[RMDB]
RNA sequence: GGGAACGACUCGAGUAGAGUCGAAAACAGUGGAACUGCGCCGGGCUAUCUCAAGGAAAGAGAUUAGCACUCCACAAAACCCUUGUUGAUGAGCGGAUCGCCUUUUGUCUGUUGAGCGAGACAAGGAUAUGAGACGAAGAUUCGUCUUCGUCUCAUAAAAAGAAACAACAACAACAAC
Reactivity to 2A3 in 0.01 (KOAc 150mM, MgCl2 10mM, bicine 150mM(pH8.5), 24C), signal-to-noise 4, nucleotides 027 to 126: c040a010g000u040g030g060a100a140c070u070g000c050g020c010c050g010g030g000c000u000a020u000c010u020c030a120a160g300g060a200a120a030g010a010g000a010u030u050a020g010c030a050c060u020c020c000a000c010a000a120a050a080c010c000c010u010u060g070u010u020g080a180u100g030a030g070c050g020g050a070u130c060g080c000c000u050u090u110u040g050u020c060u000g020u040u080g060a050g090c080g040a030g010a060c000a010a020g060g010a010
Reactivity to DMS in 0.01 (KOAc 150mM, MgCl2 10mM, bicine 150mM(pH8.5), 24C), signal-to-noise 4, nucleotides 027 to 126: c210a080g000u000g000g000a040a110c140u020g000c030g040c010c050g000g010g000c030u010a030u000c000u000c010a120a130g030g030a130a120a120g010a030g000a010u030u040a040g020c020a110c070u010c010c000a030c040a050a090a110a120c020c010c000u010u020g010u000u010g010a070u010g010a090g030c110g000g010a120u010c070g000c010c020u000u010u010u020g010u000c040u000g000u000u020g010a110g010c120g000a060g000a030c020a010a040g010g010a280
Source: RMDB library OK1LIB, as collected in RNAgym. Chemical mapping of a 177-nucleotide RNA with 2A3 and DMS. Values cover nucleotides 27 to 126. The RNA was probed in 150 mM KOAc, 10 mM MgCl2 and 150 mM bicine (pH 8.5) at 24 C. DMS adducts were read by reverse transcription with MarathonRT.